[RMDB]
RNA sequence: GGGAACGACUCGAGUAGAGUCGAAAAGUUACAUCACCUGUUUGAAAAUGAUGUUCACCAACCACUUUAAAUCCAUGACGUUUAUAAAAUGCUUGAGCACGAGGAUUAUGCUCCCAAACUCCUAGCCAUACCUAAAAUGCUUCGGCAUUUUAGGUAUAAAAGAAACAACAACAACAAC
Reactivity to 2A3 in 0.01 (KOAc 150mM, MgCl2 10mM, bicine 150mM(pH8.5), 24C), signal-to-noise 2, nucleotides 027 to 126: g000u000u090a030c000a040u040c000a000c000c050u080g200u190u190u150g180a110a070a010a000u060g020a030u030g000u060u040c010a020c060c020a020a050c020c010a080c040u140u110u160a040a100a020u000c020c030a050u040g070a050c050g020u010u120u040a240u080a070a170a000a020u130g020c040u060u050g010a020g010c020a000c060g050a050g000g010a010u070u070a040u260g020c020u000c000c000c000a020a140a060c020u000c010c010u020a020g070c050c030
Reactivity to DMS in 0.01 (KOAc 150mM, MgCl2 10mM, bicine 150mM(pH8.5), 24C), signal-to-noise 4, nucleotides 027 to 126: g020u000u000a050c040a030u000c020a050c100c060u000g000u000u010u000g000a070a070a120a100u000g000a060u010g000u000u000c110a120c040c020a100a090c060c050a080c090u000u010u000a030a070a070u000c060c030a040u010g010a080c060g010u000u000u000a070u000a060a070a090a040u000g010c060u000u010g000a090g030c020a070c110g000a070g000g000a060u000u010a070u020g010c060u000c020c010c000a030a070a110c140u010c020c030u000a090g020c120c150
Source: RMDB library OK2TST, as collected in RNAgym. Chemical mapping of a 177-nucleotide RNA with 2A3 and DMS. The RNA was probed in 150 mM KOAc, 10 mM MgCl2 and 150 mM bicine (pH 8.5) at 24 C.